Overview:
The data come from the RNA Mapping Database (RMDB), library OK2TRN. Structure probing data (2A3 and DMS) for a 177-nucleotide construct.
RNA sequence: GGGAACGACUCGAGUAGAGUCGAAAAGUCCAGAACACCUACGUCGGUGUGCCUGUGGUGAUUGGCAAGAACGGUGUGGAGAAGAUCGUUGAGCUCCAGCUGACGGCAGAGGAGAAGGCUGCCUUCGCGGUCUCAGUCUUUUCGAAGACUGAGACCGAAAAGAAACAACAACAACAAC
Reactivity to 2A3 in 0.01 (KOAc 150mM, MgCl2 10mM, bicine 150mM(pH8.5), 24C), signal-to-noise 1, nucleotides 027 to 126: g020u000c010c020a000g020a050a000c030a040c010c030u210a070c120g150u110c020g060g000u000g010u040g060c010c040u110g020u100g150g010u060g040a190u090u070g020g040c020a010a050g020a080a020c060g020g010u130g060u020g090g050a090g000a120a010g030a090u140c030g110u070u040g010a000g040c020u000c010c000a060g000c040u070g010a020c050g000g010c000a040g000a030g050g060a120g030a080a020g080g030c000u040g040c000c000u060u070c060g000
Reactivity to DMS in 0.01 (KOAc 150mM, MgCl2 10mM, bicine 150mM(pH8.5), 24C), signal-to-noise 2, nucleotides 027 to 126: g010u000c050c020a070g000a160a070c040a000c020c020u000a140c240g000u000c150g010g000u000g010u000g050c070c020u000g020u000g030g000u000g000a170u010u000g030g050c070a110a080g010a080a120c110g030g000u000g010u000g010g020a100g010a070a070g020a090u000c100g010u020u000g000a150g010c020u000c060c050a100g010c120u020g020a100c090g010g000c050a050g010a080g000g010a130g000a090a090g000g000c000u000g010c030c020u000u020c120g010
For 2A3 the reverse transcriptase was SuperScript II with manganese.